[RMDB]
RNA sequence: GGGAACGACUCGAGUAGAGUCGAAAAGUGACAUUUUAUUCGCUCUAAGAUGAACUUGAGUUCGAGUCCACUUUGAGGAUAUUAUGGAUUUCCAUUAGGAUAGGCUCUAUCUCACUGGGAUCGCAAGACGUCAGGGCCUGUUCGCAGGCCCUGACGUAAAAGAAACAACAACAACAAC
Reactivity to 2A3 in 0.01 (KOAc 150mM, MgCl2 10mM, bicine 150mM(pH8.5), 24C), signal-to-noise 1, nucleotides 027 to 126: g010u000g010a000c040a040u000u040u220u130a180u110u080c070g020c080u000c000u020a030a030g000a010u110g000a000a000c000u000u000g040a000g080u130u010c020g000a010g190u000c000c000a010c020u030u060u050g300a100g010g070a090u020a010u230u110a070u060g180g000a100u010u000u070c060c020a000u000u070a100g060g070a000u000a000g100g040c000u000c000u050a030u000c020u000c000a210c120u040g010g000g020a000u130c020g000c190a000a000g080
Source: RMDB library OK1LIB, as collected in RNAgym. This 177-nucleotide RNA was probed chemically with 2A3. Reactivities are given for positions 27 through 126.